[RMDB]
Source: RMDB library M2RFPK, as collected in RNAgym.
The record gives the reactivity of an RNA of 207 nucleotides to 2A3.
RNA sequence: GGGAACGACUCGAGUAGAGUCGAAAAAUGUGCGGCAAAGAAACAUUGUUUAUGCAAAGGCACUUCGCAAUGUGUGCUCAAACAUUGCUUAUUCAAACACGCUUCACAAUGUGCGACAGAGAAACAUAAAACGUUUAGUACUUCGGUACUAAACGAAGUGGAAUGUUCGCUUCGGCGAACAUUCCACAAAAGAAACAACAACAACAAC
Reactivity to 2A3 in 0.01 (KOAc 150mM, MgCl2 10mM, bicine 150mM(pH8.5), 24C), signal-to-noise 1, nucleotides 027 to 156: a000u080g000u100g050c060g050g060c080a000a110a080g140a060a130a010c080a180u100u100g010u100u100u020a170u300g060c080a120a000a050g070g000c050a000c000u070u070c020g000c000a040a040u070g010u000g000u000g000c090u030c120a000a030a030c000a000u010u010g000c000u080u060a220u190u120c090a030a020a050c080a020c080g050c010u000u030c000a000c010a020a030u000g000u000g050c000g090a070c010a000g000a000g100a000a110a020c000a020u130a200a000a000a000c000g010u000u000u000a000g000u000a000c000u030u050c290g040g000u000a000c000u000a010a000a000c000g000a040a000